[RMDB]
RNA sequence: GGGAACGACUCGAGUAGAGUCGAAAAACAGAACAUCACUGGAGAGUAAUCUGUUGCUCUUACGGUGUUUAUAGCGCGCCAUUUGACGGAUGGUUUAUACUUGGCCCGGUAUUGUCGCCCCGGGCGUCACAGUGCCUGAAUUCGUUCAGGCACUGUGAAAAGAAACAACAACAACAAC
Reactivity to 2A3 in 0.01 (KOAc 150mM, MgCl2 10mM, bicine 150mM(pH8.5), 24C), signal-to-noise 6, nucleotides 027 to 126: a010c040a020g100a060a030c010a080u060c000a010c010u060g030g010a000g000a010g010u020a040a120u160c090u140g200u100u060g010c010u010c020u010u090a160c010g000g010u010g000u000u120u020a140u040a000g060c090g000c020g010c050c010a020u010u030u130g100a060c060g030g010a010u010g000g070u030u150u080a120u040a060c100u080u180g060g000c000c000c000g010g000u070a120u080u200g070u090c010g010c020c010c000c000g000g000g000c000g000u010
Reactivity to DMS in 0.01 (KOAc 150mM, MgCl2 10mM, bicine 150mM(pH8.5), 24C), signal-to-noise 1, nucleotides 027 to 126: a040c160a160g000a070a100c180a060u000c000a020c070u060g030g000a030g000a030g000u000a000a070u070c170u090g000u010u000g020c000u000c000u000u030a040c050g010g010u000g010u040u010u000a100u000a100g030c040g000c140g000c010c000a010u000u000u030g060a190c120g000g010a010u000g020g000u020u070u010a120u070a080c190u080u000g000g050c010c010c000g000g010u010a030u010u080g000u060c000g000c050c160c000c000g020g000g000c110g000u010

An RNA of 177 nucleotides, treated with 2A3 and DMS and read out base by base. 2A3 adducts were read by reverse transcription with SuperScript II with manganese. For DMS, 1,415 sequencing reads were counted.